[RMDB]
RNA sequence: GGGAACGACUCGAGUAGAGUCGAAAAGAUAUGGAUGUGGAAGAGCUUUUGACGGAACUACCUCGGAAACGAGGUAAUUCCGAUAAGCUCCCACAUCCUAAGUCAAAAGACAGAGUUCGCUCUGUCACCAUACUAUACGCUUCGGCGUAUAGUAUGGAAAAGAAACAACAACAACAAC
Reactivity to 2A3 in 0.01 (KOAc 150mM, MgCl2 10mM, bicine 150mM(pH8.5), 24C), signal-to-noise 8, nucleotides 027 to 126: g020a010u050a020u120g010g000a020u010g030u030g040g100a300a270g010a300g010c060u110u180u300u300g300a220c040g000g000a010a010c010u000a000c000c000u000c010g020g020a050a050a040c000g010a010g000g000u000a000a000u000u010c000c000g000a000u010a010a010g000c000u000c010c000c000a010c000a010u000c000c000u000a000a000g010u000c020a060a000a080a100g010a000c000a000g020a000g040u110u200c260g120c140u010c000u000g000u000c000a000
Reactivity to DMS in 0.01 (KOAc 150mM, MgCl2 10mM, bicine 150mM(pH8.5), 24C), signal-to-noise 6, nucleotides 027 to 126: g010a040u010a300u000g010g000a010u000g020u000g000g010a180a140g020a020g010c010u000u000u010u010g010a260c130g010g000a010a010c030u000a000c000c000u000c000g010g000a080a070a130c010g010a010g000g020u000a000a020u000u000c000c000g010a060u010a010a010g010c000u000c010c000c000a000c000a010u000c000c000u000a010a090g010u000c040a120a070a120a120g000a020c000a010g010a040g010u000u020c280g020c000u000c000u000g000u000c010a100